[RMDB]
RNA sequence: GGGAACGACUCGAGUAGAGUCGAAAAGGGGAAUAUUGCACAAUGGGAGGAAGCCUGAUGCAGCGACGCCGCGUGAGGGAUGAAGGCCUUCGAGUUGUAAUCCUCUCUCAGCAGGGACGAAGCCCCAAUUAUUUUUGAUAUUCGUAUCAAAAAUAAUAAAAGAAACAACAACAACAAC
Reactivity to 2A3 in 0.01 (KOAc 150mM, MgCl2 10mM, bicine 150mM(pH8.5), 24C), signal-to-noise 3, nucleotides 027 to 126: g020g020g000g000a020a050u090a070u060u110g010c000a030c020a040a160u130g080g000g010a090g020g030a070a000g040c000c000u030g020a040u050g000c020a010g020c010g060a030c040g030c010c000g030c000g000u020g090a010g000g020g000a000u040g050a010a020g030g000c010c000u040u100c030g030a030g000u010u010g000u030a000a000u000c000c000u030c000u010c000u000c010a010g010c010a020g010g000g000a010c000g010a040a000g000c000c000c000c000a000
Reactivity to DMS in 0.01 (KOAc 150mM, MgCl2 10mM, bicine 150mM(pH8.5), 24C), signal-to-noise 9, nucleotides 027 to 126: g000g010g000g000a120a060u030a090u020u010g010c050a070c110a100a080u030g000g000g010a080g000g010a100a090g010c020c020u000g000a080u010g010c020a050g000c040g020a100c130g010c030c040g010c040g020u000g000a070g010g000g000a040u010g010a110a230g000g010c020c020u030u020c130g010a000g000u000u000g000u000a020a010u000c000c000u010c000u000c000u000c010a010g000c000a010g000g020g000a080c070g010a120a130g010c020c000c000c020a100
The data come from the RNA Mapping Database (RMDB), library OK1LIB. An RNA of 177 nucleotides, treated with 2A3 and DMS and read out base by base. The RNA was probed in 150 mM KOAc, 10 mM MgCl2 and 150 mM bicine (pH 8.5) at 24 C. Reactivities are given for positions 27 through 126. 2A3 adducts were read by reverse transcription with SuperScript II with manganese.